[RMDB]
RNA sequence: GGGAACGACUCGAGUAGAGUCGAAAAUAGCAGUCUUUCGAGACUGCUACAUUAAUAGUCGCUAGAAAACGAUCAAAACUAGCGACUAAGAUAACGAUCGAAAAGACGCACCCUUCGGGGUGCGUAAAUGUAAUAGACUAUUCGUAGUCUAUUACAUAAAAGAAACAACAACAACAAC
Reactivity to 2A3 in 0.01 (KOAc 150mM, MgCl2 10mM, bicine 150mM(pH8.5), 24C), signal-to-noise 3, nucleotides 027 to 126: u030a000g000c000a000g000u000c010u040u090u130c180g060a000g000a000c000u000g000c000u000a000c000a000u010u050a020a030u010a020g000u010c000g000c010u000a010g010a090a150a070a120c110g040a090u070c060a020a030a050a100c000u010a000g000c020g000a000c000u000a000a000g010a020u130a080a060c080g030a030u100c030g030a030a010a010a130g140a020c010g000c030a000c020c000c000u010u060c200g090g000g000g010u010g000c000g000u000a030a000
Reactivity to DMS in 0.01 (KOAc 150mM, MgCl2 10mM, bicine 150mM(pH8.5), 24C), signal-to-noise 5, nucleotides 027 to 126: u000a000g020c000a000g010u000c000u000u000u010c140g010a030g020a020c000u000g000c000u000a000c060a070u010u000a090a140u010a010g000u000c000g010c000u000a010g000a050a060a090a090c050g000a040u000c050a120a090a100a080c010u000a010g000c000g000a010c000u000a010a030g010a120u010a070a120c220g000a040u000c010g000a160a050a110a110g000a030c000g010c000a010c000c000c010u000u020c170g030g030g010g000u000g000c000g020u000a000a030

An RNA of 177 nucleotides, treated with 2A3 and DMS and read out base by base. Reactivities are given for positions 27 through 126. For DMS, 6,851 sequencing reads were counted. For DMS the reverse transcriptase was MarathonRT. Source: RMDB library M2PK50, as collected in RNAgym. For 2A3, 4,219 sequencing reads were counted. For 2A3 the reverse transcriptase was SuperScript II with manganese.